[RMDB]
RNA sequence: GGGAACGACUCGAGUAGAGUCGAAAAAGCGUAGCGGUACGCCGCUACGCAAGGCGCAUUUGAACUGUAUUGUACGCCUUGCAUAAAGCAAAAGUACUAAAAAAACGCGCCGUUACGACGGCACGAAAAAACAUCCAUUGGUUCGCCAAUGGAUGAACCAAAGUGCUGUGUUCGCACAGCACUUUGGAAAAGAAACAACAACAACAAC
Reactivity to 2A3 in 0.01 (KOAc 150mM, MgCl2 10mM, bicine 150mM(pH8.5), 24C), signal-to-noise 2, nucleotides 027 to 156: a000g000c000g000u000a000g000c010g010g000u050a050c180g020c050c000g000c000u000a000c000g020c000a000a000g000g000c010g000c010a070u070u060u170g110a160a110c110u100g020u240a120u150u080g010u020a020c030g020c010c000u000u020g000c030a060u090a220a130a050g010c020a020a010a020a020g010u010a020c060u150a060a030a020a020a000a030a050c000g010c010g000c000c000g000u020u060a060c140g020a000c010g000g000c020a020c050g060a110a000a000a000a000a000c000a010u010c000c000a000u010u010g030g010u020u050c160g010c060c000a000a000u000g000g010a000u000g000a000a000
Reactivity to DMS in 0.01 (KOAc 150mM, MgCl2 10mM, bicine 150mM(pH8.5), 24C), signal-to-noise 1, nucleotides 027 to 156: a090g000c020g010u000a000g020c000g000g060u000a060c250g060c000c000g000c030u020a000c000g000c010a000a010g000g050c000g030c000a080u020u010u010g040a080a210c110u050g000u010a300u000u000g000u000a040c010g000c050c020u000u030g010c010a210u000a080a070a180g000c090a130a110a140a130g030u020a140c020u040a000a000a070a000a000a060a250c010g000c020g000c030c000g000u010u000a100c110g050a150c000g000g000c000a020c020g000a000a040a020a100a090a150c000a000u000c000c000a040u030u000g000g000u000u000c300g000c020c000a000a020u000g000g030a000u000g000a040a040